[RMDB]
RNA sequence: GGGAACGACUCGAGUAGAGUCGAAAACAGACUUGUACUGAACUGAGUAAUUGUGUAGAUAACUUAACCGAUAAGACUGAUGAGCUAUACUCAUUGUGCCUGAUACUGUACUAAUCGCAAGAUUGGUGUAAUAAGCUUGGUUCGCCAAGCUUAUUACAAAAGAAACAACAACAACAAC
Reactivity to 2A3 in 0.01 (KOAc 150mM, MgCl2 10mM, bicine 150mM(pH8.5), 24C), signal-to-noise 9, nucleotides 027 to 126: c010a010g060a050c020u040u060g030u080a030c020u070g060a170a030c020u040g020a010g050u070a100a170u140u050g020u030g040u090a040g040a160u060a090a030c030u060u050a060a050c040c050g110a130u040a130a030g040a060c040u060g050a070u050g040a060g020c020u090a050u020a260c000u000c010a020u010u050g030u030g020c000c000u030g020a070u060a190c020u030g010u030a000c000u040a010a010u020c010g020c080a050a020g010a040u010u020g010g000u050
Reactivity to DMS in 0.01 (KOAc 150mM, MgCl2 10mM, bicine 150mM(pH8.5), 24C), signal-to-noise 7, nucleotides 027 to 126: c070a070g010a070c050u010u000g010u010a050c050u010g000a110a100c100u010g000a060g000u010a060a060u000u000g020u020g030u020a050g000a050u010a070a060c070u010u010a060a110c070c070g020a090u000a080a040g000a060c020u000g000a030u010g000a070g010c050u010a080u020a150c030u000c010a040u000u000g030u010g020c020c020u000g010a100u020a070c120u010g020u020a050c020u000a010a010u000c000g020c210a070a090g020a030u000u000g000g010u000